[RMDB]
RNA sequence: GGGAACGACUCGAGUAGAGUCGAAAAAUGAACGUGGUCGGCGUAAGUUAGUAGAAGAUCUAAUGGUACGCGGUGGGUUUUCGACUGUACUCGAAACCACCACCACCACCAAGUCGUUCCCACCGAAAUAUGAUUCUUGGUUCGCCAAGAAUCAUAUAAAAGAAACAACAACAACAAC
Reactivity to DMS in 0.01 (KOAc 150mM, MgCl2 10mM, bicine 150mM(pH8.5), 24C), signal-to-noise 2, nucleotides 027 to 126: a090u000g020a050a040c050g030u000g010g010u000c100g020g010c000g010u000a100a250g010u000u000a010g020u000a120g000a120a210g010a100u000c020u000a030a020u000g010g010u010a020c010g030c030g000g040u010g000g000g010u000u000u000u010c010g000a020c040u010g000u000a030c080u010c000g000a020a040a030c030c020a050c020c010a100c080c010a040c000c030a040c050c100a060a030g010u000c000g000u000u000c000c010c000a070c140c060g000a040a070
Reactivity to 2A3 in 0.01 (KOAc 150mM, MgCl2 10mM, bicine 150mM(pH8.5), 24C), signal-to-noise 3, nucleotides 027 to 126: a010u280g020a050a010c050g030u030g000g020u060c100g050g000c000g010u020a030a030g000u010u040a000g030u020a040g050a300a020g030a100u040c010u000a010a000u040g200g020u070a010c010g000c010g000g010u020g000g020g000u010u020u030u110c010g000a000c020u080g110u150a030c010u010c010g010a030a010a010c000c000a000c010c020a070c010c000a010c010c000a030c010c020a040a020g000u000c010g010u020u010c030c020c000a000c000c020g030a100a060
An RNA of 177 nucleotides, treated with DMS and 2A3 and read out base by base. 2A3 adducts were read by reverse transcription with SuperScript II with manganese. Values cover nucleotides 27 to 126. For DMS, 2,225 sequencing reads were counted.